[RMDB]
RNA sequence: GGGAACGACUCGAGUAGAGUCGAAAAGGUCUUACGUCAGCCAUGAGAACAACGGUAACUCUCAUGGUUGUCAGAGAGAUCUGACGACGCUGACCAUCUAAGUUACCGCUUGUUAGAUGGUAAGACAGCAUACCCACUACUUCGGUAGUGGGUAUGCAAAAGAAACAACAACAACAAC
Reactivity to 2A3 in 0.01 (KOAc 150mM, MgCl2 10mM, bicine 150mM(pH8.5), 24C), signal-to-noise 2, nucleotides 027 to 126: g060g020u000c020u060u080a030c100g060u050c040a010g000c040c010a020u030g070a030g020a170a000c030a020a010c040g020g010u030a010a010c000u040c000u010c060a020u080g000g000u010u000g010u020c000a010g050a000g010a000g000a070u020c010u020g020a010c080g020a030c050g040c200u070g030a030c000c000a040u030c040u070a020a010g020u020u030a040c010c030g000c140u010u090g030u020u010a040g000a020u020g000g020u030a020a070g020a010c020a000
Reactivity to DMS in 0.01 (KOAc 150mM, MgCl2 10mM, bicine 150mM(pH8.5), 24C), signal-to-noise 3, nucleotides 027 to 126: g000g010u000c010u000u000a070c120g000u000c020a170g030c030c030a030u010g010a110g000a020a090c150a040a080c030g010g000u000a000a050c020u010c050u000c040a000u000g010g020u000u000g000u000c000a060g020a080g030a190g010a060u000c000u000g000a080c070g010a050c190g020c170u010g000a050c080c010a000u000c030u000a060a030g000u000u000a020c000c000g030c160u040u000g010u000u000a050g010a020u010g000g010u000a010a040g020a110c070a150
This 177-nucleotide RNA was probed chemically with 2A3 and DMS. For DMS, 2,774 sequencing reads were counted. Conditions: 150 mM KOAc, 10 mM MgCl2 and 150 mM bicine (pH 8.5), 24 C. Reactivities are given for positions 27 through 126. For DMS the reverse transcriptase was MarathonRT.